[RMDB]
RNA sequence: GGGAACGACUCGAGUAGAGUCGAAAACACACUAGUCAAAUGUCUGGUUCAAUGUCAAAUUGGGGGCUUCAGAAUUAAGCUAGGUCCAGUCUUCUGCCGGAUGUUCAACAAAGAGAAGAAGGGUAUAAAUUCUUCUUGUGUUCGCACAAGAAGAAUUAAAAGAAACAACAACAACAAC
Reactivity to DMS in 0.01 (KOAc 150mM, MgCl2 10mM, bicine 150mM(pH8.5), 24C), signal-to-noise 3, nucleotides 027 to 126: c130a090c180a120c050u010a040g000u000c040a100a100a090u000g010u000c050u010g010g010u010u000c010a070a030u010g010u000c220a060a110a120u010u000g010g000g000g010g010c120u000u010c110a060g020a050a060u010u010a080a140g000c020u000a030g010g000u010c010c010a050g000u010c030u000u000c020u000g010c050c020g030g000a060u000g010u000u000c150a080a100c060a020a080a080g000a050g000a020a040g010a040a050g000g000g020u000a070u000a060
Reactivity to 2A3 in 0.01 (KOAc 150mM, MgCl2 10mM, bicine 150mM(pH8.5), 24C), signal-to-noise 1, nucleotides 027 to 126: c080a010c040a020c010u050a030g060u090c060a150a030a170u190g030u000c040u000g020g000u040u030c010a040a020u060g080u080c040a000a000a260u090u030g020g020g000g030g030c000u190u110c030a020g000a090a010u090u080a080a030g010c010u010a010g000g000u000c020c010a010g050u000c010u050u010c000u010g080c000c010g120g050a130u130g050u100u050c020a010a020c020a030a110a010g050a040g010a050a000g050a000a010g060g000g060u080a060u090a120